Record summary
Chemical mapping of a 207-nucleotide RNA with DMS and 2A3. The 2A3 profile rests on 2,364 reads. DMS (dimethyl sulfate) methylates the pairing face of unpaired adenines and cytosines. Reactivities are given for positions 27 through 156. It was measured as part of the RMDB library M2RFOK. The reactions ran in a buffer of 150 mM KOAc, 10 mM MgCl2 and 150 mM bicine (pH 8.5), at 24 C. High 2A3 reactivity points to a flexible backbone, as in loops and unpaired stretches.
RNA sequence: GGGAACGACUCGAGUAGAGUCGAAAAACAGAAAAAAGGAGUUUAAAUUAGAUUUGCAAACGGACGGUACUAAAUACGGUCACUUUUACGUCUAACUUAUCGUUAACUCUGCAAAAAGAAAACAAGAAAAACAAGCGUGAGUUCGCUCACGCUUGAACUACUUGGUAAUGUUCGCAUUACCAAGUAGAAAAGAAACAACAACAACAAC
Reactivity to DMS in 0.01 (KOAc 150mM, MgCl2 10mM, bicine 150mM(pH8.5), 24C), signal-to-noise 1, nucleotides 027 to 156: a260c040a190g020a010a050a070a040a130a170g010g000a080g010u000u000u000a050a010a020u010u000a080g010a060u020u000u000g060c010a000a040a020c110g030g020a040c040g020g040u000a120c050u000a090a010a300u000a000c000g030g010u010c020a020c010u000u000u000u000a030c010g000u000c000u020a020a030c000u010u000a060u000c110g020u020u000a010a070c040u040c040u020g030c120a000a040a020a040a180g000a050a020a050a110c110a070a060g040a100a040a040a070a140c020a000a020g030c020g070u000g000a020g030u000u000c300g040c000u000c000a010c020g000c000u000u000g010a010a060
Reactivity to 2A3 in 0.01 (KOAc 150mM, MgCl2 10mM, bicine 150mM(pH8.5), 24C), signal-to-noise 3, nucleotides 027 to 156: a000c020a010g120a020a080a000a000a020a050g040g010a040g020u090u120u140a080a110a110u070u070a040g010a060u010u040u150g040c080a090a030a020c030g040g020a000c030g010g020u040a020c030u150a040a130a140u150a030c040g020g010u020c010a040c130u060u070u070u150a020c020g000u000c000u000a030a070c010u070u060a040u080c020g030u040u030a030a030c010u010c010u060g010c050a040a050a040a070a050g070a040a050a020a010c070a060a010g090a100a110a000a000a000c000a000a000g000c000g000u000g000a000g000u040u080c170g030c100u000c000a000c000g000c010u000u000g000a000a000